[RMDB]
RNA sequence: GGGAACGACUCGAGUAGAGUCGAAAACAGGCCGGACCAAACCAUCCGGCUGGAGCCUCCCCAGGCUGCCUUCCACGAUUGGUCAGAAACCAUUUUGGAAGUGGGCAACGGGAACUCGUUUUCACCGGCGAGCUGGAACCUGGAGAGCUGGCACCAAGACUAUGGUAAAUUUCGAUUUACCAUAGUCAAAAGAAACAACAACAACAAC
Reactivity to DMS in 0.01 (KOAc 150mM, MgCl2 10mM, bicine 150mM(pH8.5), 24C), signal-to-noise 2, nucleotides 027 to 156: c030a160g000g000c010c010g030g010a160c020c040a070a100a090c090c080a300u000c010c010g020g010c000u000g010g020a110g010c080c010u010c000c000c000c010a060g020g050c020u000g020c030c000u000u000c010c010a070c070g000a050u000u010g150g060u000c010a300g000a110a300a060c000c000a070u010u010u000u000g010g000a060a050g030u000g030g030g000c030a140a150c050g010g020g010a040a050c020u000c010g020u000u000u000u000c160a100c180c090g000g030c030g020a040g010c030u000g020g000a080a090c020c020u010g000g000a090g000a100g040c030u000g030g000c000a230c020c000a030a300
Reactivity to 2A3 in 0.01 (KOAc 150mM, MgCl2 10mM, bicine 150mM(pH8.5), 24C), signal-to-noise 4, nucleotides 027 to 156: c040a010g040g000c020c000g010g000a010c040c080a220a050a040c040c020a030u000c000c000g000g010c000u000g000g020a010g010c010c010u010c010c000c000c010a000g040g020c020u070g080c010c000u020u000c000c010a020c020g070a080u100u250g020g030u050c090a100g240a080a100a030c000c000a010u010u010u010u030g040g020a040a040g050u210g080g100g000c040a080a040c060g030g020g020a020a020c020u030c060g020u030u020u090u070c120a140c040c030g040g010c030g010a020g020c020u040g040g070a050a070c000c010u020g020g010a060g000a000g060c060u040g020g010c020a020c070c000a020a090